[RMDB]
Source: RMDB library OK2TRN, as collected in RNAgym. This 177-nucleotide RNA was probed chemically with 2A3 and DMS. The 2A3 profile rests on 1,369 reads. For 2A3 the reverse transcriptase was SuperScript II with manganese. As a SHAPE reagent, 2A3 marks flexible, mostly unpaired nucleotides at the ribose 2'-OH.
RNA sequence: GGGAACGACUCGAGUAGAGUCGAAAAGAUCAAUUAUGAUUGCAAUGUAAUAUGUCAAGGCAGACAUAUCUAGCUGUCGCCUUAGCUAGAGAUAGCCGGUUUAUUGCUUUCAUAAGAACGGCUAGAAAUCGGUAUAGCAGUUCGCUGCUAUACCGAUAAAAGAAACAACAACAACAAC
Reactivity to 2A3 in 0.01 (KOAc 150mM, MgCl2 10mM, bicine 150mM(pH8.5), 24C), signal-to-noise 1, nucleotides 027 to 126: g060a070u150c080a030a110u060u030a000u090g000a020u070u020g000c000a040a050u060g040u270a130a070u100a120u220g070u040c090a030a020g060g000c030a020g030a020c000a020u080a070u000c020u010a010g000c010u000g010u030c030g100c030c000u020u040a020g000c000u000a080g010a020g000a040u040a000g000c020c020g000g000u050u150u030a010u000u000g000c000u000u030u010c000a030u010a050a020g040a060a050c050g080g000c040u030a000g030a020a090
Reactivity to DMS in 0.01 (KOAc 150mM, MgCl2 10mM, bicine 150mM(pH8.5), 24C), signal-to-noise 2, nucleotides 027 to 126: g020a150u000c060a110a170u000u000a020u010g000a010u000u010g020c010a000a010u000g020u020a080a110u000a050u000g000u000c090a060a040g020g020c040a150g020a030c050a030u000a050u000c040u000a000g010c020u000g000u010c050g000c050c060u000u000a060g010c020u000a050g000a120g010a130u000a010g030c000c090g000g010u000u000u000a020u000u000g000c000u010u000u010c020a020u000a010a030g010a070a050c220g000g000c020u000a030g010a020a130